[RMDB]
RNA sequence: GGGAACGACUCGAGUAGAGUCGAAAAAUCGCCGCGCACCUGAUGACCCAUGUUCUCGGGUUCAACUGCCUGCACAUGGCCAGCCGCAGCAUGUUGGGGAAUGUUGUCUGUGUGCGUGGCAGGGCGAUCAGCCUGACUCAUUCGUGAGUCAGGCUGAAAAAGAAACAACAACAACAAC
Reactivity to DMS in 0.01 (KOAc 150mM, MgCl2 10mM, bicine 150mM(pH8.5), 24C), signal-to-noise 2, nucleotides 027 to 126: a050u010c080g010c020c020g020c050g000c040a040c020c000u030g000a060u000g020a040c030c160c060a110u010g000u000u010c110u000c030g000g000g000u020u010c100a150a300c130u000g000c020c000u010g000c220a020c010a020u000g010g000c080c050a030g010c030c080g010c070a060g000c100a060u000g010u000u000g030g000g000g020a240a070u010g010u000u000g020u010c020u010g020u000g020u000g020c010g030u000g000g040c020a040g000g000g020c060g020a110
Reactivity to 2A3 in 0.01 (KOAc 150mM, MgCl2 10mM, bicine 150mM(pH8.5), 24C), signal-to-noise 2, nucleotides 027 to 126: a050u030c020g000c000c010g000c010g020c030a000c010c000u020g010a030u100g030a050c040c060c020a100u080g050u060u010c060u030c000g030g000g000u030u040c020a090a060c030u030g000c010c000u130g020c260a030c020a060u030g020g040c000c020a020g000c010c040g170c090a040g040c020a140u170g090u120u090g110g060g000g100a090a170u130g030u090u010g000u040c000u030g050u010g000u010g030c020g010u040g000g000c010a010g000g010g000c060g000a060